[RMDB]
RNA sequence: GGGAACGACUCGAGUAGAGUCGAAAAAUUCUUAUCUACAUGAAUCAUGAGCACAUCCAAGGCAACCGCAACCUACUUGAGAUCCAUUAUGCUUCCCGAGAAUGGGCCAGCAAGCAUUCCGGACGACAUAACAGAGAGGCAUAUACUAAAACAAGAGAGACAUGUAUGUGUUCGCACAUACAUGUCUAAAAGAAACAACAACAACAAC
Reactivity to DMS in 0.01 (KOAc 150mM, MgCl2 10mM, bicine 150mM(pH8.5), 24C), signal-to-noise 2, nucleotides 027 to 156: a150u000u000c000u020u000a070u000c070u000a160c040a050u010g000a110a080u000c040a120u000g010a120g030c020a070c060a070u000c030c040a090a100g010g000c030a080a040c000c060g050c030a080a060c020c000u000a050c050u000u020g010a120g030a060u000c020c030a110u000u010a060u010g020c030u000u000c040c000c020g020a100g010a060a040u020g020g000g010c030c030a120g120c050a060a080g020c030a110u000u000c040c050g000g000a140c060g000a050c000a040u010a030a050c070a100g010a070g000a060g010g010c000a070u010a130u010a170c050u010a040a050a090a070c110a080a120g010a140g010
Reactivity to 2A3 in 0.01 (KOAc 150mM, MgCl2 10mM, bicine 150mM(pH8.5), 24C), signal-to-noise 3, nucleotides 027 to 156: a000u060u010c010u060u100a130u070c040u120a090c030a150u100g090a100a040u100c050a070u110g030a040g040c020a020c010a090u020c040c030a030a040g010g000c020a010a030c000c010g020c040a010a060c000c020u030a020c020u040u040g030a020g020a060u010c020c020a090u050u050a040u120g020c020u040u040c000c010c010g070a110g020a060a030u030g020g050g020c010c000a040g010c040a080a010g020c010a020u040u000c020c020g040g000a020c030g020a010c010a050u120a090a030c040a010g090a000g000a010g110g000c060a020u040a000u030a130c100u120a010a050a050a050c080a100a020g120a000g030